[RMDB]
RNA sequence: GGGAACGACUCGAGUAGAGUCGAAAACACAACUGGUUGAGGAGUAGAGGCUUUACAAAGCCCUGAAAAGCUGCUGAAGGAUUUUAGGUAGGGUAUAGUAGGCUGUAACAGAGCUGGAGAAAAAUUCUCGUAAUAAGAGAUUCGUCUCUUAUUACGAAAAAGAAACAACAACAACAAC
Reactivity to DMS in 0.01 (KOAc 150mM, MgCl2 10mM, bicine 150mM(pH8.5), 24C), signal-to-noise 7, nucleotides 027 to 126: c080a100c100a070a100c070u000g010g010u000u000g010a100g010g010a090g010u000a080g010a130g010g010c030u000u000u000a090c170a090a110a110g000c010c020c010u000g000a080a080a100a130g010c060u000g000c070u000g000a110a110g010g000a070u000u010u000u000a050g020g010u000a040g010g000g020u000a040u010a090g020u000a060g010g010c040u000g000u010a070a070c090a100g000a070g010c030u000g000g010a090g000a030a050a060a070a110u000u010c070
Reactivity to 2A3 in 0.01 (KOAc 150mM, MgCl2 10mM, bicine 150mM(pH8.5), 24C), signal-to-noise 2, nucleotides 027 to 126: c070a010c030a050a100c050u060g000g100u060u090g040a040g060g010a010g000u050a030g070a080g020g030c020u040u100u080a040c030a070a120a040g000c000c000c000u000g010a040a030a000a000g040c020u070g000c030u060g040a070a030g060g040a120u020u100u150u210a060g050g000u050a040g030g030g000u060a040u050a150g020u000a050g050g000c020u010g020u090a060a020c020a030g050a010g030c050u060g070g020a080g090a030a080a140a010a030u220u020c030